[RMDB]
RNA sequence: GGGAACGACUCGAGUAGAGUCGAAAAGACUGCGUGCACUCGAGACGAUAUCGAGCCGGAAAUUAAUCGAUAAUGUCUCCAGUAGUGGAUACGAUCCGGCAAGUAUCGACUACCUGUGCUCGUAGGAACGGCACUGGCCAUUCGUGGCCAGUGCCGUAAAAGAAACAACAACAACAAC
Reactivity to 2A3 in 0.01 (KOAc 150mM, MgCl2 10mM, bicine 150mM(pH8.5), 24C), signal-to-noise 1, nucleotides 027 to 126: g050a010c000u000g000c000g080u000g000c000a020c000u000c000g000a000g020a000c000g000a000u000a040u000c000g000a000g000c050c000g110g000a040a040a040u190u050a170a080u210c010g000a080u020a110a070u080g000u000c010u000c170c010a130g010u160a070g110u300g050g000a000u000a000c000g000a010u000c000c000g000g090c000a000a100g000u000a000u000c000g040a000c100u300a300c000c010u000g000u000g000c000u000c050g000u000a020g000g000a010

Background: This 177-nucleotide RNA was probed chemically with 2A3. The reactions ran in a buffer of 150 mM KOAc, 10 mM MgCl2 and 150 mM bicine (pH 8.5), at 24 C. Source: RMDB library OK1LIB, as collected in RNAgym. 2A3 adducts were read by reverse transcription with SuperScript II with manganese.